[RMDB]
RNA sequence: GGGAACGACUCGAGUAGAGUCGAAAAACGUUCUUCACGUGGAGGAUGCCGUGGCUGCCUACCGGACGCUGCUGGCCAAUAUCGACCGUGUCUGCGGGAACGCUUUCAACCUCGGCGGCGGGCCGAAAAACGCCGUCAGCGUACUUUCGGUGCUGCGCAGCCGUAUUUGAUUCGUCAAAUACGGCUGAAAAGAAACAACAACAACAAC
Reactivity to DMS in 0.01 (KOAc 150mM, MgCl2 10mM, bicine 150mM(pH8.5), 24C), signal-to-noise 2, nucleotides 027 to 156: a050c050g030u000u000c010u000u010c020a090c120g040u010g000g000a090g040g020a050u000g030c050c030g030u020g000g000c040u010g030c040c040u000a080c070c020g020g020a070c000g000c020u000g020c030u000g010g040c030c040a090a110u000a170u000c010g010a040c000c020g010u010g030u010c000u000g020c000g030g000g000a040a160c100g020c110u020u000u020c100a150a180c080c010u010c020g040g040c020g010g000c020g000g000g000c000c020g000a000a000a060a120a140c300g000c010c020g010u000c040a080g000c010g010u000a040c080u000u000u010c020g030g000u000g020c020u000g010c060g000
Reactivity to 2A3 in 0.01 (KOAc 150mM, MgCl2 10mM, bicine 150mM(pH8.5), 24C), signal-to-noise 4, nucleotides 027 to 156: a010c030g010u050u020c010u060u060c050a090c240g110u260g040g010a040g040g000a050u060g050c010c020g000u020g020g000c050u110g040c010c010u030a070c020c000g020g000a010c020g010c000u010g020c030u040g000g010c010c010a100a060u050a040u090c020g010a030c020c000g010u010g040u050c060u150g020c010g010g000g050a120a060c080g020c140u060u270u190c070a060a080c030c000u020c020g070g000c000g000g000c010g030g010g000c110c010g010a070a060a000a020a000c040g010c010c030g050u050c020a010g000c020g020u020a090c050u020u050u090c030g010g000u040g030c040u030g000c020g000